Notes
The record gives the reactivity of an RNA of 207 nucleotides to DMS and 2A3. It was measured as part of the RMDB library OK3TST.
RNA sequence: GGGAACGACUCGAGUAGAGUCGAAAAGGGCUGCUGCUCCGCUCCGGAGACAUGGAGGACCGCGAAGUUUCGCUCACCAGUACCACCUGGCUCUCGGUAGAAGAACCGGACCCCACACGGCGGUAGGUGUUCCUCUUCGGGGGCAGAGGCGGAGGUGAUGUAGUACGUAAUUCGUUACGUACUACAUAAAAGAAACAACAACAACAAC
Reactivity to DMS in 0.01 (KOAc 150mM, MgCl2 10mM, bicine 150mM(pH8.5), 24C), signal-to-noise 2, nucleotides 027 to 156: g000g020g000c000u000g020c030u000g000c020u000c040c040g020c060u020c030c040g000g030a070g020a100c080a110u010g000g000a060g000g000a070c030c010g050c050g020a110a300g010u000u000u000c010g030c050u000c010a040c020c010a150g030u010a090c010c000a040c030c010u000g000g030c010u000c010u000c000g000g000u000a050g000a070a060g000a060a040c010c020g000g000a230c020c020c020c010a300c170a100c180g000g000c050g040g000u010a080g010g010u000g000u000u000c010c000u000c030u000u000c030g040g000g010g020g000c020a030g000a040g000g000c040g030g010a100g010g030u000g000
Reactivity to 2A3 in 0.01 (KOAc 150mM, MgCl2 10mM, bicine 150mM(pH8.5), 24C), signal-to-noise 4, nucleotides 027 to 156: g020g010g010c000u070g030c010u030g000c010u080c030c020g060c090u090c040c080g010g040a100g040a070c070a060u150g030g010a030g010g040a080c040c030g010c050g080a150a030g030u030u050u030c030g000c020u050c000a020c000c010a020g090u130a150c000c000a020c000c010u010g030g020c000u000c000u010c010g070g040u120a020g010a050a000g020a010a010c010c030g070g150a050c010c010c030c000a110c020a010c190g050g070c120g050g010u030a030g030g070u140g080u110u010c010c020u020c000u000u010c000g010g000g000g000g000c020a060g020a010g250g000c020g020g010a030g020g000u010g000